[RMDB]
An RNA of 207 nucleotides, treated with DMS and 2A3 and read out base by base.
Source: RMDB library RNAMAK, as collected in RNAgym.
Reactivities are given for positions 27 through 156.
RNA sequence: GGGAACGACUCGAGUAGAGUCGAAAAUCCUAAGUCUAUAUCCGAAACAUCUCAAUGAUGUUAAUUGUCAGGGAUCGGAAACGAUCCCUUGGAUUUAUUAAUUGAGAGAUGAGAUAGCUGAUAUAGAUAUGGAAAAAGCCUAAGUUCGCUUAGGCAACAGUUUUCGUAUGUUCGCAUACGAAAACUGAAAAGAAACAACAACAACAAC
Reactivity to DMS in 0.01 (KOAc 150mM, MgCl2 10mM, bicine 150mM(pH8.5), 24C), signal-to-noise 1, nucleotides 027 to 156: u010c000c000u000a050a290g020u000c000u010a020u000a000u000c010c040g000a260a240a300c020a050u000c000u000c000a100a150u010g020a080u010g000u000u000a010a050u000u000g030u000c000a020g050g000g020a010u000c000g030g000a190a090a270c020g030a010u000c000c020c020u000u000g010g020a020u000u000u000a060u000u000a000a020u000u000g000a140g000a020g010a040u010g010a130g010a290u000a130g000c100u000g010a010u000a010u000a010g000a010u000a280u010g000g000a000a070a130a150a220g000c020c010u000a000a020g010u000u010c300g020c000u000u000a010g050g030c010a020a060
Reactivity to 2A3 in 0.01 (KOAc 150mM, MgCl2 10mM, bicine 150mM(pH8.5), 24C), signal-to-noise 3, nucleotides 027 to 156: u030c010c010u030a100a030g010u000c000u010a000u000a000u000c020c040g040a040a080a030c020a030u000c000u010c030a100a300u160g040a010u100g040u020u010a010a000u020u020g040u050c030a030g000g000g000a000u000c000g010g030a030a030a150c000g000a000u000c000c000c000u000u060g000g000a000u030u220u110a010u020u040a030a020u040u040g020a020g000a010g010a060u020g020a070g060a200u140a100g040c110u060g010a010u000a000u000a010g010a000u030a080u050g040g010a030a050a090a130a000g000c010c000u010a000a010g020u040u110c260g010c130u000u000a000g000g000c010a020a010